[RMDB]
RNA sequence: GGGAACGACUCGAGUAGAGUCGAAAAGACGCUGAUGCGAUCGACUGUAAGAUAGAUAUACUGAGCAGACAGAUACGUACGGCAAGUAUCGUCGCCAGAACUACAGUCGCAAAUUGCCGUACGAAGAAUUUAUCGCAUCAUUCGUGAUGCGAUAAAUAAAAGAAACAACAACAACAAC
Reactivity to DMS in 0.01 (KOAc 150mM, MgCl2 10mM, bicine 150mM(pH8.5), 24C), signal-to-noise 5, nucleotides 027 to 126: g020a100c010g010c050u010g010a160u050g040c020g020a160u030c000g000a010c000u010g000u000a060a050g030a160u030a150g010a130u060a140u040a300c010u000g020a090g010c010a120g030a050c000a090g010a080u020a050c010g010u010a000c000g010g000c010a030a020g000u020a010u010c040g000u000c010g010c010c010a050g000a040a150c100u000a010c010a000g000u000c000g020c250a040a070a040u020u010g000c030c000g010u010a040c150g010a090a080g010a100
Reactivity to 2A3 in 0.01 (KOAc 150mM, MgCl2 10mM, bicine 150mM(pH8.5), 24C), signal-to-noise 9, nucleotides 027 to 126: g090a010c020g000c060u200g080a140u300g050c030g050a080u040c010g000a000c000u000g010u050a120a040g060a190u140a090g130a060u110a080u050a240c010u010g000a020g050c050a080g010a010c010a030g040a050u070a090c010g030u030a000c010g000g000c020a010a010g040u060a040u110c050g000u000c000g000c010c000a030g040a090a010c020u010a010c010a000g000u000c000g000c050a070a090a040u010u010g000c000c000g000u020a040c050g030a060a050g040a050
Background: An RNA of 177 nucleotides, treated with DMS and 2A3 and read out base by base. It was measured as part of the RMDB library OK1LIB. The RNA was probed in 150 mM KOAc, 10 mM MgCl2 and 150 mM bicine (pH 8.5) at 24 C. For 2A3 the reverse transcriptase was SuperScript II with manganese.